An RNA of 207 nucleotides, treated with 2A3 and read out base by base. The reactions ran in a buffer of 150 mM KOAc, 10 mM MgCl2 and 150 mM bicine (pH 8.5), at 24 C. It was measured as part of the RMDB library OK3TST.
[RMDB]
RNA sequence: GGGAACGACUCGAGUAGAGUCGAAAAGAUGUUCUCUGAUGUUGCUGAGGUCCAGCAUCUCACGAGCAGGGUACCUCGUGAAGAGAACAUGAACAGUGAGCAGAUUUGGACCUCAGCAGAUCUGAUAGAGGUACCCUGCUCUAUCGCUCACUGUAGGGUCAUAUGCAGGGUUCGCCCUGCAUAUGACAAAAGAAACAACAACAACAAC
Reactivity to 2A3 in 0.01 (KOAc 150mM, MgCl2 10mM, bicine 150mM(pH8.5), 24C), signal-to-noise 1, nucleotides 027 to 156: g140a030u040g010u000u000c000u000c000u040g160a190u140g040u230u030g030c000u000g010a000g030g040u020c010c010a010g060c030a120u040c030u050c110a040c300g010a000g050c040a000g010g000g020u010a000c000c000u080c130g010u120g000a080a000g000a000g030a020a020c000a000u100g000a030a040c000a000g000u000g000a000g000c080a070g010a100u100u190u220g000g000a000c020c050u000c000a000g000c000a040g010a010u050c010u050g100a170u090a240g000a000g000g000u040a000c000c000c000u000g000c000u000c000u000a010u050c000g000c000u000c000a000c000u000g010u020a050g270g000

Source information:
Values cover nucleotides 27 to 156.